Source information
Structure probing data (DMS and 2A3) for a 177-nucleotide construct. 2A3 adducts were read by reverse transcription with SuperScript II with manganese. High DMS reactivity at an A or C suggests that its Watson-Crick edge is free. Conditions: 150 mM KOAc, 10 mM MgCl2 and 150 mM bicine (pH 8.5), 24 C. For DMS the reverse transcriptase was MarathonRT. The data come from the RNA Mapping Database (RMDB), library OK2TST.
RNA sequence: GGGAACGACUCGAGUAGAGUCGAAAAGCCUCCCGAGACCAAGGACCACGCCGUGGAUCUGAUCCAGAAAGGUUCUGGGUGCAAGGGCAAGCAGGAGGGGGGCCAGGAAAGGACAGUUACUGGAAGAACAUGCCUUCUUUUUCGAAAGAAGGCAUGUAAAAGAAACAACAACAACAAC
Reactivity to DMS in 0.01 (KOAc 150mM, MgCl2 10mM, bicine 150mM(pH8.5), 24C), signal-to-noise 5, nucleotides 027 to 126: g010c060c030u000c010c010c000g010a290g000a070c040c020a090a050g000g010a020c010c020a110c180g010c270c080g010u000g010g010a050u000c130u010g010a080u000c020c000a050g000a060a170a110g000g000u000u000c010u000g010g000g010u000g010c060a080a240g000g010g010c180a060a090g010c060a080g000g000a120g010g010g010g000g020g010c030c020a020g010g000a060a040a050g010g000a080c090a060g010u010u010a090c050u010g000g000a100a110g000a090
Reactivity to 2A3 in 0.01 (KOAc 150mM, MgCl2 10mM, bicine 150mM(pH8.5), 24C), signal-to-noise 2, nucleotides 027 to 126: g010c000c000u010c030c000c020g040a070g040a030c020c010a040a050g000g030a020c030c000a050c120g180c100c030g170u090g000g020a040u010c150u270g060a070u040c010c000a020g080a060a100a020g070g010u030u030c000u030g040g000g010u030g060c030a040a060g070g000g010c010a000a010g030c020a030g010g060a070g030g000g000g000g000g000c010c020a030g000g030a090a100a000g060g010a020c040a070g040u010u090a020c020u070g050g000a060a030g030a060